[RMDB]
RNA sequence: GGGAACGACUCGAGUAGAGUCGAAAAGCUCAUCCUGGCCCAGACUCCGGACGAGCCGAUAGGCGUCCUCAAACCGAACGAGUUGGAGUCCGCAUAGCAACGGCCAGCCAACCAUCGUUACUAUGCACGGAGGUAGCGUAUUCGUACGCUACCUCCGAAAAGAAACAACAACAACAAC
Reactivity to DMS in 0.01 (KOAc 150mM, MgCl2 10mM, bicine 150mM(pH8.5), 24C), signal-to-noise 1, nucleotides 027 to 126: g000c020u010c040a110u000c050c040u000g000g040c070c140c080a110g000a080c050u000c020c040g010g000a020c020g000a130g000c000c010g010a220u010a080g000g030c040g050u000c040c010u000c100a050a070a120c100c080g020a030a110c120g010a090g000u000u000g040g000a080g000u010c060c180g000c000a010u000a060g000c050a020a040c010g030g000c180c050a080g000c050c040a020a130c020c070a110u000c030g000u000u000a040c030u000a020u000g000c010a210